This 177-nucleotide RNA was probed chemically with DMS and 2A3. The RNA was probed in 150 mM KOAc, 10 mM MgCl2 and 150 mM bicine (pH 8.5) at 24 C.
RNA sequence: GGGAACGACUCGAGUAGAGUCGAAAAGGCACGUAAGCACUCAGAUGCGAAAGUAGGAACUGCGUUAGGCGUCCAGACGCAGGUAGCCCGAAUUUUAUAGCUGAUGAGCGUAGCGCGUUGCAGGGUGUCUUCACAGGUAUUUCGAUACCUGUGAAGAAAAAGAAACAACAACAACAAC
Reactivity to DMS in 0.01 (KOAc 150mM, MgCl2 10mM, bicine 150mM(pH8.5), 24C), signal-to-noise 7, nucleotides 027 to 126: g010g030c010a030c010g010u000a160a180g020c000a090c000u000c010a030g010a300u010g000c010g000a030a030a020g010u010a190g000g000a140a200c010u000g010c000g010u000u020a090g010g020c090g010u010c020c030a170g000a000c000g000c000a010g000g000u040a110g010c120c020c000g050a070a120u010u040u000u030a060u020a130g000c010u000g010a300u000g000a020g020c100g020u010a080g000c100g010c020g010u020u020g030c010a060g000g000g020u020g010
Reactivity to 2A3 in 0.01 (KOAc 150mM, MgCl2 10mM, bicine 150mM(pH8.5), 24C), signal-to-noise 8, nucleotides 027 to 126: g090g000c000a010c020g020u050a090a060g010c000a040c100u000c010a010g010a050u050g000c010g030a030a030a030g040u030a020g010g010a030a010c000u000g000c010g000u020u030a070g050g030c040g070u020c020c020a030g000a000c000g000c000a000g030g040u060a060g050c010c000c000g010a010a020u220u300u120u180a100u060a030g000c000u030g030a040u010g010a020g010c070g060u090a030g000c010g000c000g050u070u140g000c010a010g020g060g040u120g030

It was measured as part of the RMDB libraries RFM100 and RFMREP.